[RMDB]
RNA sequence: GGGAACGACUCGAGUAGAGUCGAAAAGGAAUGCAUUGUUGAUAUUCUUCGUUAAAAAAUAAUGCAUUAAACUGACUGAUCAUCCAUAUUAUUGUAAAGGAGGUAUGUAACAUGGCAGGCGAUAUCGGUACGACUUUUGUUUCGACAAAAGUCGUACAAAAGAAACAACAACAACAAC
Reactivity to DMS in 0.01 (KOAc 150mM, MgCl2 10mM, bicine 150mM(pH8.5), 24C), signal-to-noise 2, nucleotides 027 to 126: g000g060a070a010u010g000c020a000u000u000g000u010u010g000a240u010a070u000u050c050u010u020c110g020u020u020a000a030a110a110a020a000u000a000a000u000g000c000a000u020u000a040a040a130c110u030g000a100c090u000g010a100u030c090a080u000c020c040a020u030a050u000u030a050u000u000g000u010a050a170a080g010g000a080g030g030u000a010u010g010u010a040a000c150a030u020g000g000c020a010g010g010c000g010a040u020a040u010c200g020
Reactivity to 2A3 in 0.01 (KOAc 150mM, MgCl2 10mM, bicine 150mM(pH8.5), 24C), signal-to-noise 3, nucleotides 027 to 126: g120g000a000a020u000g000c000a000u000u020g040u050u000g060a070u060a170u220u060c030u210u070c110g140u160u200a000a080a000a000a000a000u050a010a010u010g000c000a010u010u010a140a080a000c040u030g070a060c000u010g010a040u060c030a050u040c010c030a000u000a050u180u150a250u060u070g280u290a120a080a060g130g000a050g010g010u000a050u130g090u040a040a000c010a030u040g000g030c010a000g000g000c050g000a010u040a040u200c030g050